[RMDB]
Chemical mapping of a 207-nucleotide RNA with 2A3.
RNA sequence: GGGAACGACUCGAGUAGAGUCGAAAAGACCAGCAUGUGCAUAAAGCGGGACCGCACGGUAUAGUCUAACUCCCGGAUCAUGUAUGUGAUGUUGGAGAUGAGCUCGUCGGUGAUCCUGCCUUCGAGAGUGUACUUGACGAUGACCUUGUUAAGAACCGGCAGUGAAUAACUUCGGUUAUUCACUGCCAAAAGAAACAACAACAACAAC
Reactivity to 2A3 in 0.01 (KOAc 150mM, MgCl2 10mM, bicine 150mM(pH8.5), 24C), signal-to-noise 1, nucleotides 027 to 156: g010a000c000c000a030g030c020a010u060g110u130g060c000a020u040a190a170a120g170c010g000g000g000a050c000c040g010c020a010c060g000g000u150a080u100a170g040u000c000u030a070a020c000u000c000c010c000g000g030a010u100c040a040u020g170u280a030u230g020u020g010a020u030g300u090u150g010g000a110g000a150u280g010a010g060c050u010c100g010u010c010g000g060u020g020a120u000c000c030u060g000c010c000u110u090c000g150a140g000a030g000u100g000u030a000c000u000u000g090a020c000g120a100u030g020a030c000c010u000u070g050u000u010a110a020g020a110a130c020c000
It was measured as part of the RMDB library OK3TST.
The reactions ran in a buffer of 150 mM KOAc, 10 mM MgCl2 and 150 mM bicine (pH 8.5), at 24 C.